[RMDB]
RNA sequence: GGGAACGACUCGAGUAGAGUCGAAAAUCUGCACCACAUCUUGAACGGGUUACAGGAUUCAAUCAGAUAGAUUCUGACAAGGUUUAUGAUGAUGGAGCUCCACCGUGUUCUAUAAAAUGCUGGUUUGCGUCAUGGAGUGGUUCGCCACUCCAUGACGAAAAGAAACAACAACAACAAC
Reactivity to DMS in 0.01 (KOAc 150mM, MgCl2 10mM, bicine 150mM(pH8.5), 24C), signal-to-noise 1, nucleotides 027 to 126: u030c130u010g000c040a150c010c000a070c070a050u000c050u000u010g020a020a010c040g000g000g000u020u010a080c070a070g020g000a020u000u000c080a080a080u000c170a060g000a170u000a090g000a020u000u000c050u000g020a100c140a040a130g000g010u000u010u000a020u000g000a040u000g010a050u000g060g000a010g020c010u000c010c050a050c070c030g000u000g020u030u010c040u010a150u020a060a040a010a090u010g000c100u010g000g010u000u000u010g030
Reactivity to 2A3 in 0.01 (KOAc 150mM, MgCl2 10mM, bicine 150mM(pH8.5), 24C), signal-to-noise 2, nucleotides 027 to 126: u010c020u060g000c000a000c020c000a000c000a000u090c010u040u060g030a030a000c010g080g000g100u170u200a130c030a010g020g000a010u060u100c040a020a180u040c010a030g030a100u120a040g050a020u160u020c010u030g050a080c020a010a060g090g040u020u070u020a050u100g090a040u020g040a080u010g020g000a020g020c010u000c030c000a040c040c000g070u010g030u020u000c110u050a140u080a180a230a040a000u070g000c060u100g000g060u060u060u170g100